Source: RMDB library OK3TST, as collected in RNAgym. Chemical mapping of a 207-nucleotide RNA with 2A3 and DMS.
[RMDB]
RNA sequence: GGGAACGACUCGAGUAGAGUCGAAAAGCGCAAUAUUGCGAUCAGAUGGUUCCUGACGGUAAAGGCGGUACGGAGCCUCGCUACCUUUGUGACGUGAUAAUUCAGUCACAGACUGAUGCGUACAAGGUGAUUCGAGAUAUUUGCUCAAUCUUCCGUGAGUGACGGUAAGAUUCGUCUUACCGUCACUAAAAGAAACAACAACAACAAC
Reactivity to 2A3 in 0.01 (KOAc 150mM, MgCl2 10mM, bicine 150mM(pH8.5), 24C), signal-to-noise 5, nucleotides 027 to 156: g010c010g010c020a060a080u130a060u250u200g020c030g010a040u060c020a030g150a150u160g100g010u030u010c010c000u030g030a020c020g030g060u160a060a080a110g180g070c060g020g040u110a040c090g060g000a010g000c020c000u010c010g010c000u040a050c000c000u050u110u110g040u060g080a030c020g010u020g110a140u060a260a090u200u020c020a000g000u000c030a070c040a300g000a000c000u000g000a030u060g030c030g000u000a000c010a000a020g000g010u010g020a140u050u090c060g020a000g010a040u090a160u150u120u170g020c010u020c040a050a100u010c050u070u030c020c010g030u050g070
Reactivity to DMS in 0.01 (KOAc 150mM, MgCl2 10mM, bicine 150mM(pH8.5), 24C), signal-to-noise 1, nucleotides 027 to 156: g050c070g050c030a050a070u000a050u010u000g000c020g010a070u000c060a170g000a090u030g000g010u000u000c020c000u000g000a040c070g020g040u000a070a150a090g040g030c020g000g070u020a180c140g020g000a200g050c010c000u010c010g020c060u000a120c020c000u000u000u000g070u020g020a010c010g000u020g000a170u000a040a240u010u000c040a080g010u000c010a070c110a080g000a060c010u000g000a070u000g000c000g020u010a040c040a040a000g000g010u000g010a230u000u010c020g000a040g030a070u000a060u000u000u000g030c000u000c000a130a070u000c050u000u000c000c010g030u010g020